RNA sequence: GGGAACGACUCGAGUAGAGUCGAAAACAUGUUGCGGUCUACUUACGCGGCGAGCGCCUACCUGAUUGUAACGUGAAUGUGCCGUUGCGACCCUACCACCUUGCCUUAUCCGAACCAACGAACGAUAGUAGUUCUACGCUUUCGAGCGUAGAACUACAAAAGAAACAACAACAACAAC
Reactivity to DMS in 0.01 (KOAc 150mM, MgCl2 10mM, bicine 150mM(pH8.5), 24C), signal-to-noise 1, nucleotides 027 to 126: c070a060u020g020u010u020g020c100g000g000u000c000u010a040c040u000u010a100c050g040c070g050g020c080g000a140g050c090g000c050c050u000a100c080c100u010g010a110u000u000g000u000a040a050c020g040u000g010a080a140u030g010u000g040c060c040g040u000u000g010c030g020a090c050c010c020u010a060c050c030a040c050c050u010u000g020c000c010u000u000a060u000c020c000g000a100a100c030c060a030a110c130g000a060a060c130g010a100u010a080
Reactivity to 2A3 in 0.01 (KOAc 150mM, MgCl2 10mM, bicine 150mM(pH8.5), 24C), signal-to-noise 1, nucleotides 027 to 126: c020a050u100g050u010u060g070c050g020g060u000c010u050a080c010u220u000a020c050g000c010g080g000c040g030a090g080c050g080c000c000u040a070c000c040u000g030a100u100u100g070u060a080a070c060g010u000g090a080a080u100g010u130g050c030c010g010u010u070g020c020g020a040c000c000c000u010a070c050c000a010c020c060u020u040g000c000c010u050u050a040u050c030c020g030a010a080c000c030a080a000c040g020a060a010c060g020a040u100a100

The record gives the reactivity of an RNA of 177 nucleotides to DMS and 2A3.